[RMDB]
RNA sequence: GGGAACGACUCGAGUAGAGUCGAAAACUCCAUCUUAAAUGCUAGGACAAUUGAACUGCUCACUGUCUUCUAUGGGUCCUUUCGACACUGGGGACAUCCAUUCAUCAACUAUUUAGAAGGAUUGAGAUCUUUGCGGGUUUUUCGAAACCCGCAAAGAAAAAGAAACAACAACAACAAC
Reactivity to 2A3 in 0.01 (KOAc 150mM, MgCl2 10mM, bicine 150mM(pH8.5), 24C), signal-to-noise 2, nucleotides 027 to 126: c000u010c090c070a100u090c030u300u300a100a120a030u170g020c040u000a170g000g030a040c090a140a120u160u200g010a070a000c100u060g030c020u010c000a000c030u000g010u000c000u030u030c060u060a030u040g000g070g000u030c000c000u000u100u170c010g000a010c010a000c050u020g000g030g000g010a070c040a020u000c020c020a030u000u220c000a100u000c020a080a160c040u160a100u170u130u070a050g030a130a030g040g020a020u000u200g000a070g050a090